[RMDB]
RNA sequence: GGGAACGACUCGAGUAGAGUCGAAAACAUUUACUAAUAUGACUGUAGUUUUCCUUGGACUCAGUGUUACGUAUUAUUCUUAGCUACCUUUAACUAGGUAUUUUUCUAACAUGUAAGCUAUCGUAAAACUGUUCAUUUAGUUCGCUAAAUGAACAGUAAAAGAAACAACAACAACAAC
Reactivity to DMS in 0.01 (KOAc 150mM, MgCl2 10mM, bicine 150mM(pH8.5), 24C), signal-to-noise 4, nucleotides 027 to 126: c060a090u010u010u010a070c100u010a040a060u000a060u010g010a060c040u010g000u020a030g000u000u000u000u000c070c130u000u010g000g010a060c040u000c060a050g010u000g020u010u000a070c080g020u000a020u000u000a050u010u010c080u000u000a050g010c190u000a020c060c060u020u000u000a040a130c150u000a000g010g010u000a000u000u010u010u000u000c050u010a050a050c110a030u010g010u000a070a070g010c050u000a040u000c110g010u010a030a050a070
Reactivity to 2A3 in 0.01 (KOAc 150mM, MgCl2 10mM, bicine 150mM(pH8.5), 24C), signal-to-noise 4, nucleotides 027 to 126: c010a020u080u160u210a090c050u070a030a130u090a070u210g060a010c010u030g100u210a010g010u040u010u040u160c060c000u050u140g050g000a020c010u000c020a020g000u010g050u120u100a040c060g020u020a030u100u010a040u140u030c040u040u050a010g010c000u010a050c020c020u010u060u040a080a110c200u030a050g010g030u010a060u030u100u000u000u000c000u010a050a040c020a050u130g060u080a050a010g000c030u060a050u120c030g070u070a030a050a030